[RMDB]
RNA sequence: GGGAACGACUCGAGUAGAGUCGAAAAGAUAUGGAGAUAUGGAGCUAUGUAUCGGAAACGAUAUGCAUAGCUAUGAAGUGAUCUCCUAAGUCAAACAAGGUUUAACCCUUCGGGGUUAAACCUUGAACAUUUCUACGACGUUCGCGUCGUAGAAAUGAAAAGAAACAACAACAACAAC
Reactivity to DMS in 0.01 (KOAc 150mM, MgCl2 10mM, bicine 150mM(pH8.5), 24C), signal-to-noise 2, nucleotides 027 to 126: g000a050u000a300u020g000g020a020g040a000u000a010u010g000g000a010g000c000u010a020u000g010u000a000u000c040g020g010a130a030a230c030g020a030u010a040u000g020c050a000u000a020g000c010u000a070u000g010a130a190g010u000g020a010u010c010u010c010c000u010a040a120g000u010c060a100a080a300c000a000a000g000g010u000u000u000a000a010c010c000c000u000u010c220g050g030g000g010u020u000a010a020a020c000c000u000u000g000a060a180
The record gives the reactivity of an RNA of 177 nucleotides to DMS. For DMS the reverse transcriptase was MarathonRT. Values are in units of 0.01, from 0 to 300, in steps of 10.